[RMDB]
RNA sequence: GGGAACGACUCGAGUAGAGUCGAAAAUCUCUGCUAUCCAGAACGAUGGUUACAAAUCUCUGGACGAAGGUCAGAAAGUGUCCUUCACCAUCGAAAGCGGCGCUAAAGGCCCGGCAGCUGGUAACGUAACGAAGUCACUGUUCGCAGUGACUUCGUUAAAAGAAACAACAACAACAAC
Reactivity to 2A3 in 0.01 (KOAc 150mM, MgCl2 10mM, bicine 150mM(pH8.5), 24C), signal-to-noise 2, nucleotides 027 to 126: u000c000u030c000u000g020c020u010a020u060c000c000a000g000a080a030c010g000a000u010g000g100u100u090a090c030a040a260a070u160c120u000c080u160g030g060a040c050g000a000a010g010g020u000c010a050g160a040a210a040g290u080g040u120c000c000u000u000c020a030c030c000a030u020c020g000a000a000a150g090c100g000g000c000g000c110u090a130a070a070g070g000c000c000c000g080g000c000a000g000c000u020g000g040u030a090a020c050g010u000
Reactivity to DMS in 0.01 (KOAc 150mM, MgCl2 10mM, bicine 150mM(pH8.5), 24C), signal-to-noise 1, nucleotides 027 to 126: u000c000u000c000u000g070c100u000a060u000c000c000a030g000a220a300c060g000a000u010g050g000u000u010a000c140a050a130a190u000c060u000c240u000g000g030a070c050g000a000a000g000g000u030c000a230g000a070a300a000g090u000g000u000c000c010u000u000c050a010c140c020a000u000c000g000a060a060a000g000c090g000g000c030g060c150u010a110a130a300g000g000c000c050c080g000g000c090a140g010c000u000g000g030u000a020a000c090g000u000